The record gives the reactivity of an RNA of 177 nucleotides to DMS and 2A3. It was measured as part of the RMDB library OK2TRN. DMS adducts were read by reverse transcription with MarathonRT. For DMS, 18,500 sequencing reads were counted. 2A3 adducts were read by reverse transcription with SuperScript II with manganese. Conditions: 150 mM KOAc, 10 mM MgCl2 and 150 mM bicine (pH 8.5), 24 C. For 2A3, 24,919 sequencing reads were counted.
[RMDB]
RNA sequence: GGGAACGACUCGAGUAGAGUCGAAAAGCAGUUCACUUACUUCCAGCAGGUUGGUGGUCUGGAGUGUAAACCGGUUACCGGCGAGAUCACCUACGGUCUGGAACGUCUGGCAAUGUACAUUCAGGGCCCAUUCAUUCCUAUUCGUAGGAAUGAAUGGAAAAGAAACAACAACAACAAC
Reactivity to DMS in 0.01 (KOAc 150mM, MgCl2 10mM, bicine 150mM(pH8.5), 24C), signal-to-noise 9, nucleotides 027 to 126: g010c070a080g010u000u010c080a100c060u000u000a060c070u000u000c000c000a030g010c040a140g020g010u000u000g010g020u000g000g000u000c000u000g010g000a140g020u010g010u010a040a130a170c050c030g000g000u010u010a120c040c010g010g020c060g010a040g000a020u000c010a020c010c010u000a030c020g010g010u000c010u000g000g010a020a030c140g010u000c070u000g010g000c080a060a070u000g000u010a060c120a120u010u000c060a100g000g000g010c170
Reactivity to 2A3 in 0.01 (KOAc 150mM, MgCl2 10mM, bicine 150mM(pH8.5), 24C), signal-to-noise 9, nucleotides 027 to 126: g060c040a030g030u100u080c050a040c090u050u130a020c000u010u010c010c000a000g000c010a050g220g300u050u040g010g000u010g000g010u000c010u030g120g060a140g060u170g060u120a120a160a050c020c030g040g050u180u130a190c070c000g040g000c030g070a020g000a010u010c000a000c000c000u010a010c020g020g050u030c010u010g010g010a010a010c030g040u000c030u020g030g000c040a060a100u100g030u090a060c030a110u020u130c050a040g030g050g040c000